Structure probing data (DMS) for a 177-nucleotide construct. It was measured as part of the RMDB library M2PK90. For DMS, 849 sequencing reads were counted.
[RMDB]
RNA sequence: GGGAACGACUCGAGUAGAGUCGAAAAUAAAAGGGGGCCAGAUGUCAUGUCUCUCAAGCCUAGGAGAGACUAGACACUCUGGACUAUCGGUUAGAGGAAACCCCCCCAAAAAUGUAUAGGCGAAAAACAUAUAAAUAAAGUUCGCUUUAUUUAUAUGAAAAGAAACAACAACAACAAC
Reactivity to DMS in 0.01 (KOAc 150mM, MgCl2 10mM, bicine 150mM(pH8.5), 24C), signal-to-noise 1, nucleotides 027 to 126: u010a090a050a160a120g000g010g000g010g050c020c000a000g010a070u000g010u010c010a260u020g010u000c000u000c010u000c000a010a050g030c040c000u000a030g000g000a050g000a000g000a010c020u000a220g000a000c000a010c140u000c000u010g010g010a150c090u000a020u010c100g040g010u000u000a140g000a190g010g000a050a070a080c020c000c000c000c000c000c040a030a150a110a080a030u020g010u000a010u000a010g000g000c000g000a110a070a110a060a100